[RMDB]
RNA sequence: GGGAACGACUCGAGUAGAGUCGAAAAGAUAUGGAUGUUGUACGACAUGUCCUGUCGGAAACGACAGAGCAACAGCGUAUUGCAUCCUAAGUCAUGCCUCCAUGAGCCCUUCGGGGCUCAUGGAGAACGACACUAUCUAGUUCGCUAGAUAGUGUCGAAAAGAAACAACAACAACAAC
Reactivity to 2A3 in 0.01 (KOAc 150mM, MgCl2 10mM, bicine 150mM(pH8.5), 24C), signal-to-noise 5, nucleotides 027 to 126: g010a010u020a000u070g010g010a010u010g010u040u030g010u020a020c060g190a150c260a300u040g020u020c010c000u010g000u000c000g010g000a000a020a000c000g010a010c010a000g020a020g030c010a010a040c060a100g170c000g000u000a010u010u040g020c000a000u010c000c000u000a030a000g020u010c010a040u170g130c000c000u000c000c000a000u010g000a010g000c000c010c030u050u150c300g010g010g000g020c000u000c000a000u000g000g000a000g000a000a000
Reactivity to DMS in 0.01 (KOAc 150mM, MgCl2 10mM, bicine 150mM(pH8.5), 24C), signal-to-noise 5, nucleotides 027 to 126: g000a020u000a100u000g000g000a010u000g010u000u000g020u000a010c000g010a140c200a050u000g000u010c050c000u000g010u000c010g000g000a020a020a060c000g010a010c000a000g000a040g010c030a030a240c300a060g010c000g010u000a010u000u000g000c000a010u000c000c000u010a000a080g010u000c010a120u010g010c150c000u000c000c010a000u000g000a010g000c000c000c000u000u010c210g030g010g010g010c000u000c000a000u010g000g000a010g010a010a050